[RMDB]
RNA sequence: GGGAACGACUCGAGUAGAGUCGAAAAGUAACUUUACGGCGGUGCGUAGGUUGCGCACUUGGCAAUCUUUUCACCAUACUCCUGUAUGUCUCGCUGCAUUUUGGUGACUUCGUAAGCCAGAUCAAAACACGCCGUCGUGAUUCGUCACGACGGCGUGAAAAGAAACAACAACAACAAC
Reactivity to 2A3 in 0.01 (KOAc 150mM, MgCl2 10mM, bicine 150mM(pH8.5), 24C), signal-to-noise 1, nucleotides 027 to 126: g020u000a000a060c050u220u200u000a040c180g060g000c000g030g000u000g000c070g000u000a090g080g150u180u210g000c090g000c000a000c000u000u030g080g000c090a090a180u100c000u120u090u070u030c000a000c000c000a080u040a020c000u150c020c000u130g000u130a230u090g050u040c000u000c000g110c000u060g000c200a180u000u000u020u080g030g000u000g040a050c040u120u000c120g050u000a040a040g010c010c000a080g020a090u020c040a000a000a000a210
Structure probing data (2A3) for a 177-nucleotide construct. The RNA was probed in 150 mM KOAc, 10 mM MgCl2 and 150 mM bicine (pH 8.5) at 24 C. Values cover nucleotides 27 to 126.